[RMDB]
RNA sequence: GGGAACGACUCGAGUAGAGUCGAAAAGAGAAGAAGCGCGCGAAUUGGAAACCAGGGAACCAUAUUACGCGCGCAAGGAACCGGGCCUUGGUUCCUUGGAAAGAUUAGAUAAUUGCCCUGGUAAGAACCCACUAUUAUCGUUCGCGAUAAUAGUGGGAAAAGAAACAACAACAACAAC
Reactivity to DMS in 0.01 (KOAc 150mM, MgCl2 10mM, bicine 150mM(pH8.5), 24C), signal-to-noise 3, nucleotides 027 to 126: g000a190g000a090a110g070a100a240g000c010g050c000g020c000g010a070a020u000u030g000g000a300a130a050c000c000a020g000g000g010a150a190c000c000a010u010a030u030u020a120c020g010c000g010c000g010c020a000a010g000g010a000a000c010c000g010g020g030c070c070u040u000g000g000u010u000c000c010u000u000g000g000a080a070a050g020a150u010u050a090g000a110u070a040a110u000u030g010c000c000c000u000g020g000u040a110a040g000a100a160
Reactivity to 2A3 in 0.01 (KOAc 150mM, MgCl2 10mM, bicine 150mM(pH8.5), 24C), signal-to-noise 5, nucleotides 027 to 126: g090a000g020a140a010g090a080a030g030c000g000c000g000c000g000a020a010u020u020g010g000a020a060a080c000c000a000g000g000g030a030a070c010c000a030u080a030u280u090a110c000g000c000g010c000g020c000a010a000g000g000a000a000c000c000g060g260g050c040c040u090u050g000g010u000u000c000c000u000u010g040g100a070a060a010g090a050u160u300a030g100a150u150a180a090u110u090g050c010c000c000u000g010g000u010a010a000g040a010a020